[RMDB]
RNA sequence: GGGAACGACUCGAGUAGAGUCGAAAAGGUAGUGCGUUCAGCUCUAACUAUCUGAGCUGUCAAGUCAGCCACAUCGAACUCAGUCACGCGUGAGAUACUCCGGUUCUGUAGUUGUGUCUCCUGGAGAGCGGAAUUGCCGUGCCUCCUGCAAUGACUCACCCUCCUGGAAAUUCGUUUCCAGGAGGGUAAAAGAAACAACAACAACAAC
Reactivity to DMS in 0.01 (KOAc 150mM, MgCl2 10mM, bicine 150mM(pH8.5), 24C), signal-to-noise 1, nucleotides 027 to 156: g050g020u010a080g010u000g040c000g070u010u000c010a020g000c000u010c020u000a140a220c080u010a130u010c070u020g010a030g000c000u010g050u000c060a080a140g020u000c010a080g000c020c050a120c120a090u010c020g000a100a160c070u000c040a080g010u000c090a040c020g030c090g030u000g010a080g030a070u000a090c010u010c000c000g000g020u000u000c050u100g020u020a040g020u000u000g030u000g010u000c000u000c020c000u000g010g010a020g020a300g030c010g000g000a120a150u010u000g090c000c040g020u000g050c020c010u010c090c090u000g010c060a070a040u000g000a050c100u000c060
Reactivity to 2A3 in 0.01 (KOAc 150mM, MgCl2 10mM, bicine 150mM(pH8.5), 24C), signal-to-noise 2, nucleotides 027 to 156: g060g050u040a060g070u080g070c050g050u030u070c000a010g000c000u000c000u040a140a250c100u160a080u160c170u040g000a000g030c020u000g040u070c060a100a000g040u050c030a000g030c040c010a040c010a030u130c020g060a120a080c010u020c050a060g040u070c000a030c070g140c040g060u160g060a090g000a020u050a080c030u000c020c000g060g020u140u080c090u020g130u130a070g020u010u030g020u020g010u050c000u030c000c020u040g000g000a020g000a030g010c010g040g060a130a160u190u120g130c000c010g010u050g040c000c000u000c010c000u010g000c040a000a220u200g030a070c040u040c020
Source information
Structure probing data (DMS and 2A3) for a 207-nucleotide construct. Source: RMDB library OK3TST, as collected in RNAgym. High DMS reactivity at an A or C suggests that its Watson-Crick edge is free. The RNA was probed in 150 mM KOAc, 10 mM MgCl2 and 150 mM bicine (pH 8.5) at 24 C.